RNA sequence: GGGAACGACUCGAGUAGAGUCGAAAAGUAUACCGAAUUGAUGAAGUCCACGGAUGAGGCUGCUUUUCAAGUCAGCAUUCAUCGAUUCUUGACGGGAAUGGACGCUGCCGGACAAGCCACAGGUCACCCUAACGUCACGUUUCGACGUGACGUUAGGAAAAGAAACAACAACAACAAC
Reactivity to 2A3 in 0.01 (KOAc 150mM, MgCl2 10mM, bicine 150mM(pH8.5), 24C), signal-to-noise 2, nucleotides 027 to 126: g070u050a040u100a170c020c060g020a030a040u080u090g000a050u100g040a070a030g060u000c040c050a050c190g070g000a020u060g040a040g040g030c000u000g010c040u180u130u000u190c110a020a090g130u170c010a010g010c040a040u000u030c010a010u000c020g040a010u010u050c020u070u070g030a040c050g000g010g050a050a100u120g030g000a010c020g020c060u010g000c030c010g020g000a030c030a040a030g010c000c000a060c020a040g000g080u050c040a030c080
Reactivity to DMS in 0.01 (KOAc 150mM, MgCl2 10mM, bicine 150mM(pH8.5), 24C), signal-to-noise 2, nucleotides 027 to 126: g000u000a080u000a160c020c030g020a100a080u020u000g020a070u010g010a120a060g000u010c030c030a100c300g030g000a020u010g000a060g010g000c040u000g000c030u000u000u000u000c210a080a070g000u030c010a000g010c050a180u010u000c020a030u000c000g010a070u000u030c010u000u000g010a180c150g000g030g030a070a070u010g010g000a030c100g040c060u000g000c050c030g020g010a150c080a080a060g030c020c050a070c160a120g000g010u000c070a080c130